[RMDB]
RNA sequence: GGGAACGACUCGAGUAGAGUCGAAAAAUCGGGGUUCGCCCCGAUAAAAAAGCGUACUACCUACGGCCAUUGUCAGAUUGCCGUCCCAAAUAGGACGGGAUCUUGGAUUUAUGGAACUACCGUAGGUAUCGCAAAAACUGGAUAUUCGUAUCCAGAAGGACAUCCUUCUAUUCGUAGAAGGAUGUCCAAAAGAAACAACAACAACAAC
Reactivity to 2A3 in 0.01 (KOAc 150mM, MgCl2 10mM, bicine 150mM(pH8.5), 24C), signal-to-noise 1, nucleotides 027 to 156: a010u000c000g070g000g020g040u060u020c070g120c010c010c000c010g000a000u060a000a020a000a000a000a010g040c050g060u160a110c010u000a000c020c000u020a000c010g010g010c030c000a060u000u000g010u020c020a000g010a020u000u030g300c020c020g000u030c030c000c000a060a240a160u300a100g000g000a000c000g000g000g000a000u000c010u030u120g160g030a020u000u300u300a010u000g000g040a050a020c100u150a070c240c000g000u000a010g000g000u000a000u000c000g000c000a000a000a000a090a000c000u000g000g010a000u010a010u030u060c150g010u010a000u040c000c000a000g000a020a090